[RMDB]
This 177-nucleotide RNA was probed chemically with DMS and 2A3. Conditions: 150 mM KOAc, 10 mM MgCl2 and 150 mM bicine (pH 8.5), 24 C.

RNA sequence: GGGAACGACUCGAGUAGAGUCGAAAAGAGCUCGCCAGCACGCAGGAGUGAGGUGAGGAGGACGGCGGCCAGGGCGCGGAGAGCUUGCCGGCGCUCCGCCACCGCCGCUACCUCCUUCCGCGUGCUGGCCUGCGAAUACAUUCGUGUAUUCGCAGGCAAAAGAAACAACAACAACAAC
Reactivity to DMS in 0.01 (KOAc 150mM, MgCl2 10mM, bicine 150mM(pH8.5), 24C), signal-to-noise 9, nucleotides 027 to 126: g000a140g010c030u000c040g020c050c000a000g010c010a010c000g010c010a070g010g000a040g010u030g010a050g000g020u010g010a090g000g000a070g010g010a170c060g000g010c010g000g010c140c120a170g010g010g010c220g010c000g000g000a030g000a040g010c040u010u020g020c280c170g010g000c010g000c000u000c000c070g010c000c040a120c010c020g010c000c000g010c020u000a040c010c000u000c000c000u000u000c000c040g010c000g010u000g010c000u000g000
Reactivity to 2A3 in 0.01 (KOAc 150mM, MgCl2 10mM, bicine 150mM(pH8.5), 24C), signal-to-noise 9, nucleotides 027 to 126: g110a020g050c030u030c050g030c010c000a000g020c000a000c010g010c050a100g010g060a060g050u260g060a050g040g090u140g100a060g050g030a030g060g030a130c040g010g010c000g000g000c060c100a200g040g050g010c100g000c000g010g000a030g000a000g020c050u120u160g150c070c050g030g000c010g000c000u000c000c000g000c000c000a010c000c000g000c000c000g000c000u000a000c000c000u000c000c000u010u010c000c000g000c000g000u000g000c000u000g000